[RMDB]
RNA sequence: GGGAACGACUCGAGUAGAGUCGAAAAGGAUAACAUGCUCGAUAGGGCAUGAGUUCUAGUAUCAUAAGCGUUUCCUCAUAGGAACGUCCACGAAUUUGAUCAAUUACUCUUCGUGCUUUGUCAGCAGGACCCACAGAUGAUUCGUCAUCUGUGGGUCAAAAGAAACAACAACAACAAC
Reactivity to 2A3 in 0.01 (KOAc 150mM, MgCl2 10mM, bicine 150mM(pH8.5), 24C), signal-to-noise 4, nucleotides 027 to 126: g040g000a010u040a200a070c010a080u020g010c000u070c100g140a150u160a100g000g000g010c000a040u130g000a000g000u000u050c040u070a090g050u090a040u010c010a020u030a120a060g010c020g010u010u170u150c010c010u160c080a150u200a130g000g010a010a000c000g020u060c010c090a190c100g120a170a110u110u050u100g040a040u050c040a060a090u060u130a100c040u030c020u140u130c100g000u000g000c020u040u000u050g000u010c010a000g000c000a040g070
Reactivity to DMS in 0.01 (KOAc 150mM, MgCl2 10mM, bicine 150mM(pH8.5), 24C), signal-to-noise 1, nucleotides 027 to 126: g000g000a000u050a100a020c040a100u050g000c000u000c030g040a080u020a010g000g020g000c040a040u000g040a090g000u000u000c160u010a040g010u040a000u010c040a060u000a070a140g000c010g030u000u000u000c010c000u040c300a300u000a120g000g000a000a000c040g000u000c200c120a140c150g000a020a080u050u000u000g000a050u010c040a040a070u030u000a000c090u000c000u070u040c050g030u000g000c000u000u010u000g000u000c000a000g000c000a040g000
This 177-nucleotide RNA was probed chemically with 2A3 and DMS. Source: RMDB library OK1LIB, as collected in RNAgym. For 2A3 the reverse transcriptase was SuperScript II with manganese.